[RMDB]
RNA sequence: GGGAACGACUCGAGUAGAGUCGAAAACCGUAGGUGGUCUUGUCAGAGUUCACAGUGUCAUCGAUCACAGCUUCGAAAGAGGCUGUGGGAGACACUGAGAACUCUUGGAUUUAGACCACCUAAACGGAAAAUCCACCGGAGUUCGCUCCGGUGGAAACGUGCUAUAAUCGUUCGCGAUUAUAGCACGAAAAGAAACAACAACAACAAC
Reactivity to DMS in 0.01 (KOAc 150mM, MgCl2 10mM, bicine 150mM(pH8.5), 24C), signal-to-noise 1, nucleotides 027 to 156: c000c000g030u000a000g000g040u010g030g020u000c010u000u010g010u010c000a050g020a030g000u000u000c000a300c010a060g040u000g000u000c000a170u000c170g010a110u010c010a030c010a030g020c000u000u010c010g030a150a130a230g010a030g000g040c000u010g030u020g020g000g010a130g010a030c000a010c000u000g020a130g020a000a010c000u000c000u000u000g020g010a010u000u010u000a030g010a020c010c010a010c010c010u010a000a040a060c000g000g000a090a050a080a120u000c010c010a010c010c020g050g000a030g040u000u020c300g020c020u000c000c020g010g040u010g000g000a000a010a060
Reactivity to 2A3 in 0.01 (KOAc 150mM, MgCl2 10mM, bicine 150mM(pH8.5), 24C), signal-to-noise 1, nucleotides 027 to 156: c010c010g030u000a000g000g000u000g000g020u010c000u000u000g030u020c010a000g000a000g010u000u000c020a010c000a030g000u010g020u040c190a300u200c120g040a070u080c030a000c000a000g000c000u010u010c040g100a170a110a100g000a020g000g060c010u010g000u010g000g000g010a030g000a000c000a000c000u000g020a040g010a020a000c010u000c000u000u030g010g000a000u300u000u000a000g000a000c000c010a010c000c000u000a000a000a000c000g020g030a090a050a000a170u020c000c020a000c000c000g000g020a010g010u110u170c240g160c120u000c000c000g000g010u000g000g010a000a000a010